RNA sequence: GGGAACGACUCGAGUAGAGUCGAAAACUCGACGAUCUCUUUGAUCUCCUGAAGGAGGAAGGAGCUCUCGAGCGCUCUCCCGCCCCUCGGAUGGGCCGCUUCCGGCGAACGAGCCCGAAGAGCGAGUAUGGGCUACUCUUCGGAGUAGCCAAAAGAAACAACAACAACAAC
Reactivity to 2A3 in 0.01 (KOAc 150mM, MgCl2 10mM, bicine 150mM(pH8.5), 24C), signal-to-noise 9, nucleotides 027 to 129: c040u000c000g010a020c060g040a070u020c030u000c040u030u030u060g240a220u050c000u020c000c020u170g230a230a120g030g000a000g000g000a010a010g000g000a000g000c000u000c000u010c010g000a000g010c010g020c010u040c010u010c010c010c000g010c000c010c000c000u020c020g020g050a040u070g070g020g000c000c000g020c000u070u030c020c060g080g010c040g010a050a030c030g010a030g000c000c000c000g020a040a010g010a010g050c070g010a010g050u110a130u210g060
Reactivity to DMS in 0.01 (KOAc 150mM, MgCl2 10mM, bicine 150mM(pH8.5), 24C), signal-to-noise 6, nucleotides 027 to 129: c100u000c010g020a070c120g010a000u030c020u010c030u050u020u020g030a120u060c020u030c020c010u050g080a160a130g000g040a050g040g000a080a010g010g040a020g020c100u020c010u020c000g000a030g000c080g030c020u010c100u010c020c040c070g000c050c000c000c030u010c040g020g010a060u030g030g000g040c060c050g020c150u030u020c060c060g000g070c070g050a060a070c060g040a110g010c050c010c020g030a230a090g030a060g040c090g000a100g020u040a100u000g050
An RNA of 170 nucleotides, treated with 2A3 and DMS and read out base by base. The DMS profile rests on 18,121 reads. The 2A3 profile rests on 21,258 reads. Values cover nucleotides 27 to 129. Conditions: 150 mM KOAc, 10 mM MgCl2 and 150 mM bicine (pH 8.5), 24 C.